An RNA of 177 nucleotides, treated with DMS and 2A3 and read out base by base. 2A3 is a SHAPE reagent: it acylates the 2'-hydroxyl of flexible nucleotides of all four kinds. DMS adducts were read by reverse transcription with MarathonRT. Source: RMDB library OK2TRN, as collected in RNAgym. For 2A3, 2,509 sequencing reads were counted. 2A3 adducts were read by reverse transcription with SuperScript II with manganese.

[RMDB]
RNA sequence: GGGAACGACUCGAGUAGAGUCGAAAAGGACGCGGCAACGGAGCGGGCGGCCCGGCCCGUGAGCAGCUGCGGCAGGACGCGUCGCGACACCGCUACCGUUAUGAGCCGCCCGCCACUCCAGCCGGGUCGGUCAUAAAUGGUUCGCCAUUUAUGACCGAAAAGAAACAACAACAACAAC
Reactivity to DMS in 0.01 (KOAc 150mM, MgCl2 10mM, bicine 150mM(pH8.5), 24C), signal-to-noise 2, nucleotides 027 to 126: g020g010a080c000g000c010g000g010c020a130a090c090g000g020a240g000c010g010g010g020c000g010g000c010c010c010g010g000c220c120c020g030u000g010a030g010c050a070g000c040u000g020c010g000g010c010a170g010g000a110c110g010c080g040u000c100g000c010g020a090c100a100c090c080g010c000u000a030c020c020g010u000u030a260u010g010a030g030c000c000g000c020c030c000g010c020c070a130c070u010c020c020a100g010c030c000g010g000g030u000
Reactivity to 2A3 in 0.01 (KOAc 150mM, MgCl2 10mM, bicine 150mM(pH8.5), 24C), signal-to-noise 2, nucleotides 027 to 126: g090g020a040c060g000c020g210g010c020a180a000c150g010g000a020g010c010g020g000g000c020g000g000c000c000c040g060g040c020c000c010g040u040g010a030g000c080a020g030c030u150g000c060g030g000c030a050g040g130a040c040g040c040g070u040c030g010c000g020a110c060a060c090c100g040c020u040a090c010c010g020u050u090a150u180g060a040g020c000c000g000c000c030c000g000c000c000a040c010u000c010c010a010g030c030c000g060g020g000u030